[RMDB]
RNA sequence: GGGAACGACUCGAGUAGAGUCGAAAAGAACUUUGGCCGGCUCGGAAUAGAAUCAGGGGGUGCAAACUGCCCACUGGCAGAGAGGAUUAUAGCAAAUGCGUACCCUAUUGCAAUACAGCCCGGCCAACAUAGACUACUCUAUUCGUAGAGUAGUCAAACAUUGAUGUUACUUCGGUAACAUCAAUGUAAAAGAAACAACAACAACAAC
Reactivity to 2A3 in 0.01 (KOAc 150mM, MgCl2 10mM, bicine 150mM(pH8.5), 24C), signal-to-noise 4, nucleotides 027 to 156: g020a070a020c020u050u020u000g000g000c000c010g020g000c030u050c110g020g040a120a060u150a130g060a040a050u160c080a070g000g010g010g000g020u090g000c020a070a110a130c030u010g000c010c020c050a160c190u150g010g000c000a000g030a010g000a020g090g030a100u230u150a120u250a150g050c030a030a090a110u110g000c010g050u120a100c000c000c000u020a060u020u080g040c040a060a030u080a150c020a020g030c050c010c000g000g000c000c010a000a000c000a000u060a020g000a000c000u010a000c000u000c000u000a020u030u040c150g040u090a000g000a000g000u000a000g000u000c000a000a000
Reactivity to DMS in 0.01 (KOAc 150mM, MgCl2 10mM, bicine 150mM(pH8.5), 24C), signal-to-noise 2, nucleotides 027 to 156: g020a090a080c060u000u010u000g000g040c000c040g040g030c000u000c070g020g040a140a180u000a080g020a120a120u000c050a060g000g010g020g020g010u020g020c070a030a080a130c030u000g000c020c020c090a150c110u000g030g070c100a060g020a220g000a190g000g000a190u010u020a100u000a130g000c070a090a070a120u000g020c010g000u000a130c010c030c020u010a080u030u000g000c050a070a120u020a080c020a040g000c060c020c020g010g000c020c010a010a010c110a070u000a210g030a030c010u000a030c000u000c000u000a110u010u010c240g000u010a000g010a040g030u000a010g020u000c020a010a050

An RNA of 207 nucleotides, treated with 2A3 and DMS and read out base by base.
The 2A3 profile rests on 2,534 reads.
High DMS reactivity at an A or C suggests that its Watson-Crick edge is free.